[RMDB]
RNA sequence: GGGAACGACUCGAGUAGAGUCGAAAAACAUGCUGGCCAACCCAACCCCACGAUCCUCCAUCGGCAUGAUCAUGAUGUGUUCUCAAAUAUCAGGCCAGUAAAUCACCAUGCUCGUGCUGGCAAAGGCAACUUAUGCCCAAGUUCGCUUGGGCAUAAACGUCAGGGAUUGAUUCGUCAAUCCCUGACGAAAAGAAACAACAACAACAAC
Reactivity to 2A3 in 0.01 (KOAc 150mM, MgCl2 10mM, bicine 150mM(pH8.5), 24C), signal-to-noise 2, nucleotides 027 to 156: a000c020a020u040g010c000u000g000g030c000c020a050a000c060c000c060a040a110c050c020c040c030a060c120g060a100u010c000c000u030c030c000a010u020c000g010g000c020a000u010g010a020u000c000a010u030g030a070u010g060u000g050u090u000c060u010c060a080a120a000u240a080u070c140a060g010g010c000c020a000g000u020a000a060a050u060c000a020c010c000a010u010g010c020u010c010g000u000g020c010u030g000g060c030a060a070a030g020g000c040a080a000c030u060u010a000u000g000c000c000c000a000a000g020u060u110c140g050c100u040u050g030g000g000c000a000u000a000a000a000
Structure probing data (2A3) for a 207-nucleotide construct. Conditions: 150 mM KOAc, 10 mM MgCl2 and 150 mM bicine (pH 8.5), 24 C. It was measured as part of the RMDB library M2RFOK.